[RMDB]
Source: RMDB library OK2TST, as collected in RNAgym. Chemical mapping of a 177-nucleotide RNA with DMS and 2A3. DMS adducts were read by reverse transcription with MarathonRT.

RNA sequence: GGGAACGACUCGAGUAGAGUCGAAAAAUUGCCGCGCAUCUGACUUGGCUGGUAAUACUGGUCAUGGCCGUGGUCGGCAUGCAGAUUACCCGGCACACUCACUUCCGCGACGUAUCAAGUGUAGCCAGGACGAUAAAAUAUUCGUAUUUUAUCGUCCAAAAGAAACAACAACAACAAC
Reactivity to DMS in 0.01 (KOAc 150mM, MgCl2 10mM, bicine 150mM(pH8.5), 24C), signal-to-noise 9, nucleotides 027 to 126: a080u000u000g010c010c010g020c140g010c100a040u010c050u010g020a050c030u000u000g000g000c020u010g010g010u000a070a060u010a300c020u000g000g010u000c010a020u000g010g020c000c060g010u010g010g010u010c030g010g010c010a040u000g000c100a040g010a130u000u000a100c040c030c040g010g010c010a070c070a050c060u000c060a090c070u000u000c050c040g000c070g010a050c120g010u000a040u010c100a100a070g020u010g010u010a110g010c040c050a140
Reactivity to 2A3 in 0.01 (KOAc 150mM, MgCl2 10mM, bicine 150mM(pH8.5), 24C), signal-to-noise 8, nucleotides 027 to 126: a000u040u040g010c010c000g000c030g010c020a050u050c100u090g010a050c020u040u040g020g000c010u020g030g000u080a180a070u130a300c010u020g030g000u040c020a020u030g100g000c030c010g030u070g090g060u070c010g000g010c010a000u040g020c020a010g030a140u050u120a100c000c020c000g020g000c010a010c010a010c020u040c010a060c040u090u030c030c030g080c050g050a060c040g060u060a050u180c060a050a040g020u010g010u060a040g040c020c020a030